An RNA of 207 nucleotides, treated with DMS and 2A3 and read out base by base. Conditions: 150 mM KOAc, 10 mM MgCl2 and 150 mM bicine (pH 8.5), 24 C. Reactivities are given for positions 27 through 156.
[RMDB]
RNA sequence: GGGAACGACUCGAGUAGAGUCGAAAAGGUGUCCUUCAGGAAGACGUGAAGCCAAAGCCUCCACCUCCAAACUCAGGGGCCCAGGGAGUCCAGGCACCCAUCCACUCACAAGGCUGGAUAUGGUGCAUUCCAGGAGAGGGGUUGGGGGCGAGUGGCCUCCAUAUGUCGGUUUCGACCGACAUAUGGAAAAAGAAACAACAACAACAAC
Reactivity to DMS in 0.01 (KOAc 150mM, MgCl2 10mM, bicine 150mM(pH8.5), 24C), signal-to-noise 1, nucleotides 027 to 156: g010g010u000g000u000c020c090u010u020c070a100g020g000a130a100g010a020c040g000u000g000a110a090g040c010c010a070a050a300g010c080c030u010c000c010a080c000c000u000c000c000a090a150a300c010u000c010a170g010g010g040g000c040c040c040a130g040g030g000a040g040u000c010c010a210g000g020c000a020c000c000c150a190u010c010c010a080c000u010c100a200c200a130a240g010g000c130u000g020g000a000u000a010u000g010g010u000g050c020a090u000u000c020c010a090g040g010a170g000a200g000g000g000g010u000u000g060g000g030g040g060c030g030a030g010u000g010g000c030c070
Reactivity to 2A3 in 0.01 (KOAc 150mM, MgCl2 10mM, bicine 150mM(pH8.5), 24C), signal-to-noise 3, nucleotides 027 to 156: g080g000u080g030u050c000c010u020u080c060a070g030g070a050a040g050a060c080g060u070g130a060a020g000c000c000a030a060a000g000c000c000u010c010c000a030c000c010u010c010c010a160a100a170c020u020c040a040g000g010g040g000c030c050c030a090g100g080g030a070g060u020c040c040a040g100g000c010a020c020c020c010a020u010c020c030a020c000u080c050a100c060a150a070g060g020c140u020g030g000a010u030a070u210g010g000u050g070c030a070u130u050c020c040a000g090g030a040g030a020g000g010g000g000u060u050g000g000g020g010g020c010g000a010g050u050g000g000c000c000
Overview:
For DMS the reverse transcriptase was MarathonRT. The data come from the RNA Mapping Database (RMDB), library OK3TST.